[RMDB]
RNA sequence: GGGAACGACUCGAGUAGAGUCGAAAAUGAGACAAACACGCUUCACAAUGUGCGGCAAAGAAACAUUGUUUAUGCAAAGGCACUUCGCAAUGUGUACUCAAACAUUGCUUAUUCAAACACGCUUCACAAAAGAAUCAGUGGUUCGCCACUGAUUCAAGUACAGGUAUGCCUUCGGGCAUACCUGUACAAAAGAAACAACAACAACAAC
Reactivity to 2A3 in 0.01 (KOAc 150mM, MgCl2 10mM, bicine 150mM(pH8.5), 24C), signal-to-noise 3, nucleotides 027 to 156: u190g010a010g030a060c060a020a190a010c060a030c070g020c020u010u040c030a000c010a020a030u010g010u010g000c040g040g060c060a070a080a040g060a000a060a000c010a000u000u030g100u000u030u130a090u080g040c030a050a080a110g040g000c060a040c090u090u090c110g000c010a000a040u020g020u010g040u120a120c050u060c100a060a050a010c000a010u010u010g000c010u020u080a110u130u090c050a020a100a020c050a010c120g050c060u150u160c080a070c040a200a120a030a090g010a000a000u000c000a000g000u000g050g000u020u070c240g060c020c000a010c000u000g000a000u000u000c000a000a000

Chemical mapping of a 207-nucleotide RNA with 2A3. The 2A3 profile rests on 1,509 reads.